The record gives the reactivity of an RNA of 177 nucleotides to 2A3 and DMS. The 2A3 profile rests on 5,510 reads. Reactivities are given for positions 27 through 126. For DMS, 4,013 sequencing reads were counted.
RNA sequence: GGGAACGACUCGAGUAGAGUCGAAAAUCGUUGGGUACUGGGCCGGGGGUGGGCAAGGAUGGCCUGCUCGGUAUCAGUGGGAACGGCAAGCGCAGCACCACGCGACUUCUUGAUGCCGAGUUCCCGAGUUUUCCUAUUAAUUCGUUAAUAGGAAAACAAAAGAAACAACAACAACAAC
Reactivity to 2A3 in 0.01 (KOAc 150mM, MgCl2 10mM, bicine 150mM(pH8.5), 24C), signal-to-noise 3, nucleotides 027 to 126: u100c020g030u040u150g010g020g030u070a090c080u020g000g040g000c060c020g000g000g000g000g210u300g020g000g000c040a060a030g130g020a160u140g090g020c010c010u010g000c010u000c010g030g000u060a120u080c000a010g020u060g040g020g010a060a040c030g040g000c050a110a050g020c050g020c070a060g050c040a060c060c000a040c050g030c010g070a150c020u080u070c010u060u110g030a030u060g020c010c010g020a030g020u000u020c020c000c000g010a020
Reactivity to DMS in 0.01 (KOAc 150mM, MgCl2 10mM, bicine 150mM(pH8.5), 24C), signal-to-noise 2, nucleotides 027 to 126: u020c030g030u030u000g000g000g010u020a050c070u000g010g040g040c150c200g070g020g000g040g110u170g000g000g000c030a100a130g010g040a140u050g000g000c010c000u000g000c010u000c000g000g030u000a020u000c010a050g000u040g000g000g000a070a080c030g000g010c110a110a080g000c030g010c030a050g000c030a090c010c070a060c030g000c010g010a110c120u000u000c050u010u020g000a120u010g000c020c010g010a090g000u000u000c010c000c000g000a100